[RMDB]
RNA sequence: GGGAACGACUCGAGUAGAGUCGAAAAUUGAACACGGUUCCUGUGCAAGAUUAAACUCGUCCCACUGCGUUGCUACAAAUUUUUGCGGGGAACUUUUGCAGCGUUAGAAGAGGUGACAUGACGCACACUCAUGCAUGGCAUUCGUGCCAUGCAUGAGAAAAGAAACAACAACAACAAC
Reactivity to 2A3 in 0.01 (KOAc 150mM, MgCl2 10mM, bicine 150mM(pH8.5), 24C), signal-to-noise 3, nucleotides 027 to 126: u100u130g040a070a000c080a020c090g060g010u010u010c000c030u060g010u040g050c030a090a010g000a100u130u120a130a100a060c070u010c050g070u000c010c020c010a040c020u050g000c030g010u020u050g020c030u070a030c090a060a180a190u120u130u000u050u030g040c050g000g010g010g000a040a050c000u070u000u000u000g030c050a010g000c000g000u030u190a020g030a090a000g110a090g060g040u080g000a010c030a050u070g010a050c040g000c030a030c000a020
Reactivity to DMS in 0.01 (KOAc 150mM, MgCl2 10mM, bicine 150mM(pH8.5), 24C), signal-to-noise 2, nucleotides 027 to 126: u030u000g000a140a100c050a110c030g030g030u010u000c050c040u000g090u010g040c090a070a090g050a040u000u000a110a110a140c100u000c060g010u000c000c010c040a110c090u000g010c020g000u000u000g030c030u000a080c130a000a080a050u010u000u030u000u000g000c000g000g020g000g030a040a050c120u020u000u000u000g020c050a030g010c010g040u000u030a070g000a050a040g000a050g000g010u030g000a260c110a080u010g010a080c130g000c040a020c140a160